[RMDB]
RNA sequence: GGGAACGACUCGAGUAGAGUCGAAAAUUUUGGUCUUUACAGCACCCCUGUUUUGAAGAUGAAGAAACUAAUGUGAAAGUUAGAUGAUAGCUCAAGAUCACAUAGCUGAUGAGUGGUGGAGCAGAGGCGAGAACCCAUGCCAGCUGAUUGGCAGGACUAGUAACUGAUCAUUCGUGAUCAGUUACUAAAAAGAAACAACAACAACAAC
Reactivity to DMS in 0.01 (KOAc 150mM, MgCl2 10mM, bicine 150mM(pH8.5), 24C), signal-to-noise 5, nucleotides 027 to 156: u000u000u000u000g030g010u000c020u000u000u000a070c030a100g000c040a130c040c020c010c050u010g010u010u000u010u000g020a080a090g030a100u000g020a110a120g000a190a050a100c040u010a040a070u000g000u010g010a110a090a120g010u000u000a040g010a150u010g010a160u010a050g020c020u000c030a060a080g000a180u000c010a040c040a080u000a060g010c020u000g000a090u000g010a120g010u000g000g010u000g020g010a080g020c040a070g010a070g000g030c030g010a130g000a060a080c040c020c000a100u000g010c020c020a050g010c070u010g000a180u000u010g010g010c020a040g010g020a110c140
Reactivity to 2A3 in 0.01 (KOAc 150mM, MgCl2 10mM, bicine 150mM(pH8.5), 24C), signal-to-noise 6, nucleotides 027 to 156: u070u060u030u100g040g000u010c020u030u080u060a060c020a020g010c040a080c000c020c010c030u040g070u040u100u060u100g080a080a050g020a040u110g040a020a060g040a070a110a040c060u070a070a100u070g030u020g060a120a050a060g020u030u030a030g010a100u090g020a070u080a030g000c010u030c080a070a040g020a120u040c010a020c020a100u100a030g040c060u040g030a060u040g030a070g040u080g010g040u020g020g020a010g010c030a010g010a010g040g010c010g010a020g030a050a030c000c010c020a040u040g000c010c000a050g020c070u170g090a190u140u030g040g000c010a010g000g030a010c020